[RMDB]
RNA sequence: GGGAACGACUCGAGUAGAGUCGAAAAGCGCCCCUUUUCGAAGGGGCGCACUGGAAAUAAAGCCGAAAGGCUAGGCAUUCGUUAUUUGGCGAAAGCCUGCCACUAUUGAGAUCUUCGGAUCUCAAAAAGAACAAGAAUGAUUCGUCAUUCUUGUUCUAAAAGAAACAACAACAACAAC
Reactivity to 2A3 in 0.01 (KOAc 150mM, MgCl2 10mM, bicine 150mM(pH8.5), 24C), signal-to-noise 7, nucleotides 027 to 126: g010c000g020c020c000c000c000u020u060u030u090c200g100a010a000g010g000g010g000c000g000c000a000c000u010g040g100a030a100a070u130a050a110a010g030c020c020g060a070a040a020g000g000c030u030a010g000g000c010a020u010u000c010g010u020u120a300u300u250u300g060g000c000g010a000a010a010g000c000c000u010g000c020c020a040c030u090a180u070u070g000a000g000a000u010c000u030u050c210g080g000a000u000c000u010c010a010a010a010a010
Reactivity to DMS in 0.01 (KOAc 150mM, MgCl2 10mM, bicine 150mM(pH8.5), 24C), signal-to-noise 6, nucleotides 027 to 126: g010c000g000c000c000c000c000u000u000u000u020c160g010a020a010g010g010g020g020c010g000c000a000c050u010g010g000a090a090a060u000a040a050a050g010c010c010g000a140a090a130g000g020c000u000a000g000g010c000a110u000u000c000g010u000u000a180u000u010u010g000g010c000g000a000a010a040g010c000c000u000g000c000c010a090c200u010a160u000u000g000a020g000a010u000c000u000u010c180g010g000a000u000c010u000c000a010a010a050a080

This 177-nucleotide RNA was probed chemically with 2A3 and DMS. For DMS, 9,369 sequencing reads were counted. The reactions ran in a buffer of 150 mM KOAc, 10 mM MgCl2 and 150 mM bicine (pH 8.5), at 24 C. Values cover nucleotides 27 to 126. The 2A3 profile rests on 13,839 reads. DMS adducts were read by reverse transcription with MarathonRT.